Chemical mapping of a 207-nucleotide RNA with 2A3 and DMS. For DMS, 7,672 sequencing reads were counted. The RNA was probed in 150 mM KOAc, 10 mM MgCl2 and 150 mM bicine (pH 8.5) at 24 C. The data come from the RNA Mapping Database (RMDB), library OK3TST. Reactivities are rounded to 0.1 and cut off at 0 and 3. Values cover nucleotides 27 to 156. 2A3 adducts were read by reverse transcription with SuperScript II with manganese.
[RMDB]
RNA sequence: GGGAACGACUCGAGUAGAGUCGAAAACAAUCAUCAUAGACUCACGUUGUCCUAUCAAGAAUCGAAUACCAAUUCGGCUCAUGUAGAACCUAUCUAACCACUCCUGUAUUGGUGCUCCUAUCCUUCCGGCCUUUCGCUUCCUCUUCCACUCCAAUACUCAACUCAUUAUCUUCGGAUAAUGAGUUGAAAAAGAAACAACAACAACAAC
Reactivity to 2A3 in 0.01 (KOAc 150mM, MgCl2 10mM, bicine 150mM(pH8.5), 24C), signal-to-noise 6, nucleotides 027 to 156: c040a010a090u110c030a030u030c020a030u070a130g030a040c010u030c040a050c100g050u060u090g040u050c020c020u090a090u180c060a090a070g030a070a030u050c020g020a030a010u080a190c050c060a040a070u020u020c010g000g020c010u020c030a060u120g040u080a030g030a050a010c020c000u040a080u060c020u010a030a040c030c000a020c030u030c010c000u050g020u120a110u070u130g070g010u030g010c000u000c010c000u020a030u050c000c000u040u010c010c000g000g000c010c000u040u080u030c040g040c030u040u030c000c020u030c030u080u020c030c020a050c030u050c040c020a040a050u170a130c140
Reactivity to DMS in 0.01 (KOAc 150mM, MgCl2 10mM, bicine 150mM(pH8.5), 24C), signal-to-noise 3, nucleotides 027 to 156: c040a130a110u010c060a100u000c070a160u010a140g000a070c020u000c060a140c090g030u000u010g020u000c000c010u010a070u000c030a140a150g020a040a040u000c020g010a090a070u010a140c180c150a110a250u010u000c050g020g010c020u000c010a080u000g040u000a070g010a040a040c030c010u000a100u000c050u010a040a060c040c030a050c040u000c010c010u000g050u010a110u010u000g000g020u000g010c010u000c020c030u000a070u000c020c010u010u020c020c030g040g010c010c020u010u010u000c070g010c060u000u000c020c010u000c060u000u000c020c030a090c030u000c010c020a030a070u010a130c120